[RMDB]
RNA sequence: GGGAACGACUCGAGUAGAGUCGAAAAAAGUUCUAUCACUAUUAACGGUUGGCUUCGUGACUUCCUUUGGGCUCAGUCUUCACAGGUGCUUACAAGCUAUGGCCAGCCUAUUAGCAUGUAUGGCCUAGUUGAACACCAUGUUCGCAUGGUGUUCAACAAAAGAAACAACAACAACAAC
Reactivity to DMS in 0.01 (KOAc 150mM, MgCl2 10mM, bicine 150mM(pH8.5), 24C), signal-to-noise 2, nucleotides 027 to 126: a040a100g010u000u000c020u020a110u000c030a060c040u010a060u010u000a100a100c130g020g030u000u000g020g000c070u010u000c110g040u000g010a060c040u000u000c070c010u010u000u010g010g000g010c030u020c120a110g000u000c070u000u010c090a040c110a050g000g000u000g030c070u000u010a110c110a120a090g000c050u000a030u020g010g010c030c050a100g020c100c040u020a070u000u000a100g010c030a110u000g020u010a090u010g000g020c050c020u000a100
Reactivity to 2A3 in 0.01 (KOAc 150mM, MgCl2 10mM, bicine 150mM(pH8.5), 24C), signal-to-noise 1, nucleotides 027 to 126: a040a000g110u090u060c090u080a160u090c020a020c060u100a110u240u080a090a020c080g060g000u070u040g050g000c010u070u040c070g040u050g130a100c010u020u070c010c010u010u060u080g070g030g000c020u000c070a010g040u050c000u050u080c010a030c000a070g000g050u030g150c030u030u080a010c010a080a080g020c030u030a040u220g010g050c000c000a000g000c000c000u010a040u050u090a030g000c040a030u100g000u100a220u010g000g020c000c010u040a110